Chemical mapping of a 177-nucleotide RNA with 2A3 and DMS.
Reactivities are given for positions 27 through 126.
DMS adducts were read by reverse transcription with MarathonRT.
The data come from the RNA Mapping Database (RMDB), library OK2TST.
[RMDB]
RNA sequence: GGGAACGACUCGAGUAGAGUCGAAAAUCGCCGCGGCACGCGUUUUCGCCCGUCGCAACAUGCCGGCGUGUCCGCCCGCUGCUUUCCGCUUGCUGCCCGCCGCCCGCGGCUGGACCGAAAACGACGACUCCUCCAUAUGAUUCGUCAUAUGGAGGAGAAAAGAAACAACAACAACAAC
Reactivity to 2A3 in 0.01 (KOAc 150mM, MgCl2 10mM, bicine 150mM(pH8.5), 24C), signal-to-noise 4, nucleotides 027 to 126: u060c020g020c040c010g030c020g060g030c060a020c080g020c000g010u030u000u040u060c020g000c000c000c020g020u020c010g000c010a030a090c010a180u200g060c070c010g010g000c010g010u090g050u030c020c030g010c010c020c000g030c020u050g020c010u100u100u060c030c030g020c060u030u100g010c010u030g010c020c000c000g020c000c010g020c000c040c030g010c000g010g000c030u060g000g010a050c070c030g030a040a020a000a020c040g160a050c020g070a080
Reactivity to DMS in 0.01 (KOAc 150mM, MgCl2 10mM, bicine 150mM(pH8.5), 24C), signal-to-noise 7, nucleotides 027 to 126: u000c070g020c020c040g010c060g020g020c130a140c130g000c040g010u000u000u000u000c050g010c050c020c030g020u010c030g020c050a120a090c160a100u010g010c140c030g000g010c020g010u000g000u000c040c080g010c040c050c040g020c050u010g000c070u000u000u000c070c060g000c050u000u010g010c040u000g010c050c040c010g020c040c050g000c080c050c080g020c030g010g010c010u000g010g000a080c070c020g000a040a020a040a060c070g010a100c140g010a210